[RMDB]
RNA sequence: GGGAACGACUCGAGUAGAGUCGAAAACUAGUAGAGCAGUUAUUCGCCGAUUCAGUUGAUCCAGUAACUCUCCCAGUUCAACUCCUUCAACAGUUUUAAGGAGACUGUAAUUAGGCAUCUGUUCGACCUUGCAAUCCGUAUUCGUACGGAUUGCAAGAAAAGAAACAACAACAACAAC
Reactivity to 2A3 in 0.01 (KOAc 150mM, MgCl2 10mM, bicine 150mM(pH8.5), 24C), signal-to-noise 3, nucleotides 027 to 126: c030u060a050g070u060a040g040a010g010c010a010g000u130u140a180u210u300c140g000c030c000g010a010u000u010c020a000g010u010u070g160a110u050c060c010a040g070u110a020a060c010u050c010u000c060c010c000a000g000u010u010c010a070a080c030u000c000c000u070u110c040a140a150c040a190g050u090u060u100u130a030a000g000g010a030g000a010c020u020g060u100a020a020u000u050a070g000g000c000a000u000c010u020g010u010u010c010g040a030c000
Reactivity to DMS in 0.01 (KOAc 150mM, MgCl2 10mM, bicine 150mM(pH8.5), 24C), signal-to-noise 2, nucleotides 027 to 126: c060u000a080g010u010a120g000a050g000c020a040g010u010u000a120u000u010c220g040c010c000g000a030u000u000c000a020g000u000u000g020a150u000c030c040a100g010u010a030a050c040u020c090u000c010c010c000a200g010u000u020c060a090a100c030u000c040c010u020u010c110a100a110c180a060g000u000u000u010u000a090a080g000g000a050g000a020c030u000g000u010a020a020u000u000a080g070g010c020a070u010c010u000g020u000u000c010g000a120c190

Chemical mapping of a 177-nucleotide RNA with 2A3 and DMS. For DMS, 2,038 sequencing reads were counted. Source: RMDB library OK2TST, as collected in RNAgym. The reactions ran in a buffer of 150 mM KOAc, 10 mM MgCl2 and 150 mM bicine (pH 8.5), at 24 C.